[RMDB]
Structure probing data (DMS and 2A3) for a 177-nucleotide construct.
For 2A3, 1,229 sequencing reads were counted.
RNA sequence: GGGAACGACUCGAGUAGAGUCGAAAAUAGUCGGAAUUCGUUCCGACUAGAUGAACGCUCCAAGCGGCAGCGCGCUCAAAAGAGCACGCAAAAGCAACGCAAAAAUGAACUUAUUCGUAAGUUCAAACUCCUAAUGUGUCUUCGGACACAUUAGGAGAAAAGAAACAACAACAACAAC
Reactivity to DMS in 0.01 (KOAc 150mM, MgCl2 10mM, bicine 150mM(pH8.5), 24C), signal-to-noise 1, nucleotides 027 to 126: u000a010g000u000c000g000g000a040a020u000u020c210g020u000u000c000c010g020a000c000u020a000g000a040u000g000a230a150c210g000c080u000c040c010a090a130g030c020g030g030c130a150g000c050g020c020g000c000u010c010a060a040a130a120g000a020g000c000a020c000g010c000a060a000a190a120g010c110a030a060c040g030c050a040a020a050a080a120u010g000a020a030c000u000u000a020u000u000c230g020u000a000a030g020u000u000c000a010a070a070
Reactivity to 2A3 in 0.01 (KOAc 150mM, MgCl2 10mM, bicine 150mM(pH8.5), 24C), signal-to-noise 1, nucleotides 027 to 126: u020a010g000u000c000g000g040a010a010u050u020c180g070u090u000c030c050g000a000c010u000a000g000a030u090g030a100a050c000g000c080u050c010c030a070a050g000c000g020g010c000a010g010c000g010c000g000c000u010c020a260a300a190a010g020a000g000c000a000c000g000c010a000a140a000a050g010c070a030a120c000g000c070a050a130a020a000a100u090g020a030a000c000u010u000a010u020u130c160g100u060a000a000g000u000u010c000a040a020a050